[RMDB]
RNA sequence: GGGAACGACUCGAGUAGAGUCGAAAAGUACUUAGUGCCAGGUGCUAGGAGGAAUGCAGAGAAGAAUCAAACAUGGACGUGUUCCUUAAGAUAGAUGCUCUGAGUGGUAAAUGAUGAUUAUCAUUUGGAAAAGGCUGGAUGUUAUCACUGAGAGAUAACGCUGGGCAGUGUUCGCACUGCCCAGCGUAAAAGAAACAACAACAACAAC
Reactivity to 2A3 in 0.01 (KOAc 150mM, MgCl2 10mM, bicine 150mM(pH8.5), 24C), signal-to-noise 1, nucleotides 027 to 156: g000u000a030c060u070u070a020g040u000g050c100c090a120g010g030u040g090c000u000a040g030g040a000g000g000a150a100u080g000c000a010g040a000g000a200a000g010a000a030u100c130a070a130a000c080a050u090g000g080a000c130g070u040g000u020u010c000c030u060u070a100a000g000a010u110a000g050a010u210g000c010u000c040u060g030a020g030u020g000g020u070a000a000a100u120g010a000u020g000a010u040u060a010u060c030a010u030u080u120g000g040a060a160a060a000g190g080c030u020g020g020a020u110g040u030u140a030u010c000a020c040u100g000a090g000a000g030a070u140a110
The data come from the RNA Mapping Database (RMDB), library OK3TST. An RNA of 207 nucleotides, treated with 2A3 and read out base by base. Reactivities are given for positions 27 through 156. For 2A3, 387 sequencing reads were counted.